Structure probing data (2A3) for a 177-nucleotide construct. The RNA was probed in 150 mM KOAc, 10 mM MgCl2 and 150 mM bicine (pH 8.5) at 24 C. For 2A3 the reverse transcriptase was SuperScript II with manganese.
RNA sequence: GGGAACGACUCGAGUAGAGUCGAAAAACUGCGCAAGAAAAGCAAGACGUCGCCUUCUUGCGCGUGACCAUACGGGUCACUCGUCGCUGAUUGGCGCAUGUCUAAAGAACAAGAGAUAAAAGUGGUAAGCAGUACCCGCAUUCGUGCGGGUACUGCUAAAAGAAACAACAACAACAAC
Reactivity to 2A3 in 0.01 (KOAc 150mM, MgCl2 10mM, bicine 150mM(pH8.5), 24C), signal-to-noise 1, nucleotides 027 to 126: a000c000u080g000c000g080c160a060a000g060a210a080a000a000g110c110a050a100g300a170c130g060u270c060g000c000c000u000u050c000u210u000g000c000g000c000g000u000g010a000c000c000a000u080a250c160g000g070g000u000c000a000c000u000c060g140u060c040g000c080u000g000a300u120u210g040g000c000g000c000a000u000g040u170c080u140a110a000a000g020a000a000c020a130a060g080a000g000a100u170a210a080a210a000g040u250g000g080u000a000